RNA sequence: GGGAACGACUCGAGUAGAGUCGAAAAGAGUCCAUGGUGGCGAUUUCGGUGUCUAACUCGAUGGAAUCAGACUUUACCUUGGCCACCUGCUUGUCCAACAUCUGACGCCGAUCGAUAUUCUGCUGGCACCCCUCACGUGGUUCGCCACGUGAGGGGUAAAAGAAACAACAACAACAAC
Reactivity to 2A3 in 0.01 (KOAc 150mM, MgCl2 10mM, bicine 150mM(pH8.5), 24C), signal-to-noise 2, nucleotides 027 to 126: g090a010g010u060c070c070a040u140g000g060u050g000g020c040g000a080u000u110u000c000g010g000u180g100u010c030u040a130a220c080u030c050g080a140u080g050g000a000a110u150c000a100g020a050c040u090u140u080a010c030c000u020u040g050g000c000c040a060c050c030u060g020c070u050u190g070u040c110c000a000a020c000a060u110c050u050g110a060c050g030c000c000g030a050u060c010g000a000u000a090u300u000c060u060g040c000u010g000g000c020
This 177-nucleotide RNA was probed chemically with 2A3. 2A3 adducts were read by reverse transcription with SuperScript II with manganese. Conditions: 150 mM KOAc, 10 mM MgCl2 and 150 mM bicine (pH 8.5), 24 C. It was measured as part of the RMDB library OK1LIB.